[RMDB]
RNA sequence: GGGAACGACUCGAGUAGAGUCGAAAAGAGAGGGUCUUCCUCUGUCGCCCAAGCUGGAGUACAGUGGAACAGUCAUAGCUCACUGCAGCCUCAAACUCUUGGCUUCAAGUAAUCCUCUCACUUUGGCCUCCCAAAAUGUUGGGAUUACAGGCAUGAGGACAGAGAUUCUCUUCGGAGAAUCUCUGUCAAAAGAAACAACAACAACAAC
Reactivity to 2A3 in 0.01 (KOAc 150mM, MgCl2 10mM, bicine 150mM(pH8.5), 24C), signal-to-noise 1, nucleotides 027 to 156: g040a000g000a000g090g070g000u170c150u140u210c110c010u110c020u000g070u090c080g020c030c000c010a010a010g000c060u060g030g000a110g040u110a040c060a070g000u070g060g000a040a110c000a010g070u080c090a220u270a210g010c040u080c070a060c020u030g000c060a070g090c000c010u070c020a080a150a080c030u070c040u030u040g040g000c000u070u090c020a100a010g010u000a030a010u000c000c000u000c000u000c000a020c060u150u010u080g070g000c020c000u170c020c000c000a010a030a040a120u300g050u250u050g010g000g000a000u030u130a010c010a000g010g090c030a040u260g080a000g170